[RMDB]
RNA sequence: GGGAACGACUCGAGUAGAGUCGAAAAGCUACUUCGGUAGCAAAAAAGAUAUGGAGUGAAUCUUCAAUUCGUAUCGGAAACGAUACCGAAUUGACACUCCUAAGUCAAAAAGAGGGUUCGCCCUCAAUCUACAUAAAGUGUUCGCACUUUAUGUAGAAAAAGAAACAACAACAACAAC
Reactivity to 2A3 in 0.01 (KOAc 150mM, MgCl2 10mM, bicine 150mM(pH8.5), 24C), signal-to-noise 2, nucleotides 027 to 126: g000c000u000a000c010u040u120c300g170g000u010a010g000c000a070a050a030a010a010a080g040a020u050a010u090g000g000a000g020u010g070a100a160u130c100u110u020c100a000a010u010u010c000g000u000a000u000c000g000g000a080a070a020c010g000a000u010a020c080c050g000a000a010u010u010g000a000c010a000c000u020c000c000u020a110a020g020u020c050a040a060a060a070a100g010a010g040g030g000u100u150c270g190c030c000c010u010c000a000a000
Reactivity to DMS in 0.01 (KOAc 150mM, MgCl2 10mM, bicine 150mM(pH8.5), 24C), signal-to-noise 5, nucleotides 027 to 126: g010c000u000a000c000u000u020c150g050g030u000a000g010c000a000a030a060a120a090a040g010a030u000a300u000g000g000a030g030u000g000a130a090u020c200u010u000c020a000a010u000u000c010g020u000a000u000c000g000g000a100a080a170c010g000a010u000a000c080c080g030a000a000u000u010g000a050c010a000c000u000c000c000u000a020a050g000u020c030a130a080a070a120a120g000a010g020g000g020u000u020c280g010c020c010c000u000c010a040a050